Conditions: 150 mM KOAc, 10 mM MgCl2 and 150 mM bicine (pH 8.5), 24 C. An RNA of 177 nucleotides, treated with DMS and 2A3 and read out base by base. The 2A3 profile rests on 820 reads. 2A3 adducts were read by reverse transcription with SuperScript II with manganese. For DMS the reverse transcriptase was MarathonRT.
[RMDB]
RNA sequence: GGGAACGACUCGAGUAGAGUCGAAAAAGCGGGCUGUGGAUUGCAGCUUGGCCGGCAAAUGGAAUCAGAUCUGGCGACAUUAUUCAGAAGCUGUUCCCUCAGUAAAUGCGCUGUUUUCCAUCAGGAACUUUGGAUACAACUUCGGUUGUAUCCAAAGAAAAGAAACAACAACAACAAC
Reactivity to DMS in 0.01 (KOAc 150mM, MgCl2 10mM, bicine 150mM(pH8.5), 24C), signal-to-noise 2, nucleotides 027 to 126: a020g000c030g000g000g010c010u000g030u000g010g000a130u000u010g000c020a000g020c020u000u000g010g010c010c030g010g000c120a010a140a060u000g020g000a140a100u000c170a050g000a230u020c040u000g010g000c050g030a130c070a100u020u010a150u010u030c240a180g000a130a080g000c010u010g020u000u010c020c000c010u000c060a020g010u000a030a070a090u000g000c050g010c010u000g000u010u010u010u000c010c000a110u000c140a120g020g000a100a090
Reactivity to 2A3 in 0.01 (KOAc 150mM, MgCl2 10mM, bicine 150mM(pH8.5), 24C), signal-to-noise 1, nucleotides 027 to 126: a010g020c050g000g010g020c000u010g020u010g070g080a150u060u200g000c000a000g000c000u050u040g030g010c010c000g050g000c050a100a050a090u130g070g110a200a110u240c060a050g030a120u040c010u020g000g010c030g050a070c040a100u030u140a150u140u280c100a050g000a150a010g000c010u000g010u040u030c010c000c000u000c000a010g000u040a030a220a190u200g070c010g000c040u010g010u000u040u030u030c010c000a070u130c040a030g110g120a040a070